[RMDB]
RNA sequence: GGGAACGACUCGAGUAGAGUCGAAAAAGUUAGGUUCGCUAUGGUGCAACUCUUUAAGGCAAUAACGAACUAAUUCUAAGCAAGUAAUGGAGAAAUGCCAGGGUCACUAUCUAGCCAUAAAAGUGCUGUAAGUGACUUAGAUUCGUCUAAGUCACAAUACCUAAAGGCGAUUCGUCGCCUUUAGGUAAAAAGAAACAACAACAACAAC
Reactivity to DMS in 0.01 (KOAc 150mM, MgCl2 10mM, bicine 150mM(pH8.5), 24C), signal-to-noise 1, nucleotides 027 to 156: a120g000u000u000a080g000g010u000u000c040g020c030u000a030u000g010g050u000g020c060a060a130c110u000c060u000u000u000a110a090g030g020c050a100a050u000a060a030c010g000a000a030c010u010a050a090u000u010c040u010a090a130g000c090a090a150g030u020a060a050u000g020g010a150g030a140a040a080u000g040c030c020a110g000g010g000u000c060a050c070u000a050u000c060u000a060g000c050c020a070u000a030a040a140a120g020u020g010c020u000g000u020a050a120g010u000g000a020c000u000u000a010g010a010u000u000c300g010u000c000u010a010a020g000u000c000a010c010a040a150
Reactivity to 2A3 in 0.01 (KOAc 150mM, MgCl2 10mM, bicine 150mM(pH8.5), 24C), signal-to-noise 2, nucleotides 027 to 156: a000g070u070u040a040g010g060u000u010c010g020c010u020a030u070g090g100u040g060c050a110a220c090u030c090u100u210u140a130a050g030g000c010a040a010u070a060a050c030g020a000a000c020u040a000a010u040u080c130u080a040a050g100c090a040a100g080u130a040a150u120g080g060a070g040a110a160a010u080g000c000c000a010g000g010g000u030c000a020c060u020a030u230c010u020a010g010c010c000a000u060a040a080a020a000g070u060g040c050u030g010u100a130a090g000u030g000a010c010u000u000a010g000a010u040u000c060g000u010c090u000a000a000g000u000c010a000c000a020a000
This 207-nucleotide RNA was probed chemically with DMS and 2A3. The RNA was probed in 150 mM KOAc, 10 mM MgCl2 and 150 mM bicine (pH 8.5) at 24 C. Source: RMDB library M2RFPK, as collected in RNAgym. For 2A3 the reverse transcriptase was SuperScript II with manganese.